The record gives the reactivity of an RNA of 177 nucleotides to 2A3 and DMS. DMS adducts were read by reverse transcription with MarathonRT. It was measured as part of the RMDB library RFM100. The 2A3 profile rests on 1,009 reads. The reactions ran in a buffer of 150 mM KOAc, 10 mM MgCl2 and 150 mM bicine (pH 8.5), at 24 C. The DMS profile rests on 2,191 reads. Reactivities are given for positions 27 through 126. High DMS reactivity at an A or C suggests that its Watson-Crick edge is free.
[RMDB]
RNA sequence: GGGAACGACUCGAGUAGAGUCGAAAAUCCGAAGCGCUUUAGUGCCUUCCGUCCCUAAACCGCCAACAGCCAGAACGGCUUCUCCCCGCGGUUUGUCACUGAUCCGCAGGGCCCGGAAGGGCCUUCGAACCGAUUCACGGUUCGCCGUGAAUCGGUUAAAAGAAACAACAACAACAAC
Reactivity to 2A3 in 0.01 (KOAc 150mM, MgCl2 10mM, bicine 150mM(pH8.5), 24C), signal-to-noise 1, nucleotides 027 to 126: u050c000c000g030a030a020g000c060g000c120u120u100u210a110g050u090g060c000c000u000u030c020c000g030u060c000c000c000u030a060a040a000c000c010g040c000c040a040a050c000a180g000c010c000a040g030a190a080c010g000g000c000u030u020c020u020c000c000c000c010g010c020g040g000u020u070u090g060u020c020a020c130u090g020a070u090c030c000g020c110a030g020g000g000c020c010c000g030g020a040a090g050g000g010c020c000u010u030c000g020
Reactivity to DMS in 0.01 (KOAc 150mM, MgCl2 10mM, bicine 150mM(pH8.5), 24C), signal-to-noise 2, nucleotides 027 to 126: u000c020c030g000a070a090g000c100g040c090u030u020u020a030g000u030g000c040c010u030u010c080c010g000u010c070c030c070u010a040a110a000c030c040g000c030c140a090a200c230a040g000c090c050a140g070a120a170c180g000g030c010u010u000c030u000c020c010c000c060g000c030g030g000u000u010u030g040u010c130a070c010u070g010a100u000c030c000g000c080a130g020g000g020c000c050c000g020g100a110a120g010g020g030c000c020u010u000c020g010